Conditions: 150 mM KOAc, 10 mM MgCl2 and 150 mM bicine (pH 8.5), 24 C. An RNA of 177 nucleotides, treated with DMS and 2A3 and read out base by base. For DMS the reverse transcriptase was MarathonRT. Values are in units of 0.01, from 0 to 300, in steps of 10. It was measured as part of the RMDB library M2PK50.

RNA sequence: GGGAACGACUCGAGUAGAGUCGAAAAAGAAUAGUUUUCGAACUAUUCUCACGACGACCUUGGCAAACCCUGAGGCGCGAUCCCACGCGAUCGUCUGUUCGAACACCUGGUUGUUCGCAACCAGGAACUUGUUACGGUCUUUCGAGACCGUAACAAGAAAAGAAACAACAACAACAAC
Reactivity to DMS in 0.01 (KOAc 150mM, MgCl2 10mM, bicine 150mM(pH8.5), 24C), signal-to-noise 1, nucleotides 027 to 126: a000g010a020a010u000a010g000u000u000u000u020c230g030a030a010c000u020a030u010u010c000u010c090a090c080g000a120c060g010a090c090c010u010u000g010g020c060a040a160a090c080c180c040u000g040a070g000g000c080g000c000g000a050u000c000c000c020a260c110g000c040g010a100u010c010g010u050c020u010g010u000u020c070g040a110a140c230a060c000c000u000g000g010u020u000g010u000u000c130g010c020a010a010c030c000a010g010g000a040a090
Reactivity to 2A3 in 0.01 (KOAc 150mM, MgCl2 10mM, bicine 150mM(pH8.5), 24C), signal-to-noise 1, nucleotides 027 to 126: a000g040a040a020u030a000g020u020u030u060u080c160g040a000a000c000u000a010u000u000c040u020c020a070c030g040a000c020g050a100c010c010u010u040g030g020c100a100a000a300c020c030c000u030g040a030g040g020c010g010c010g060a050u010c000c000c010a040c010g000c010g030a090u060c030g030u030c130u190g140u080u100c080g050a040a010c000a040c090c000u000g000g060u010u000g040u020u010c170g070c090a010a000c000c020a000g030g010a000a000